[RMDB]
RNA sequence: GGGAACGACUCGAGUAGAGUCGAAAAUACACUUUACGUGUGCUGGUUUCAUUACUUUGUCCCAAACCAGGCACGCGUAAUUAAAGGCCAGUUUGGCCAGGUCCCCGUUAUCGAUGGUCACCAAUAAAGUUGAUGUAGUAUUCGUACUACAUCAACUAAAAGAAACAACAACAACAAC
Reactivity to DMS in 0.01 (KOAc 150mM, MgCl2 10mM, bicine 150mM(pH8.5), 24C), signal-to-noise 9, nucleotides 027 to 126: u010a120c140a160c130u000u000u000a000c000g020u000g010u000g010c010u000g000g010u000u000u000c130a090u010u010a090c150u010u010u010g010u000c020c020c030a060a030a020c010c010a030g020g020c000a010c010g020c010g010u000a000a010u000u010a060a110a110g010g010c000c000a120g010u000u010u000g020g020c010c010a030g010g000u000c030c010c010c110g010u000u000a060u000c070g010a070u000g010g010u000c040a090c060c080a080a090u000a060a080
Reactivity to 2A3 in 0.01 (KOAc 150mM, MgCl2 10mM, bicine 150mM(pH8.5), 24C), signal-to-noise 9, nucleotides 027 to 126: u100a010c040a030c070u020u020u010a000c000g000u000g000u000g000c010u000g000g050u020u040u080c080a090u090u190a130c110u150u160u240g060u120c020c020c000a000a000a000c030c000a070g160g030c000a000c000g000c000g000u000a000a000u040u090a110a060a010g020g000c010c020a080g110u110u230u170g060g000c000c000a010g020g030u010c020c020c000c000g070u090u070a100u140c060g030a030u050g020g030u040c030a020c080c020a070a070u130a150a220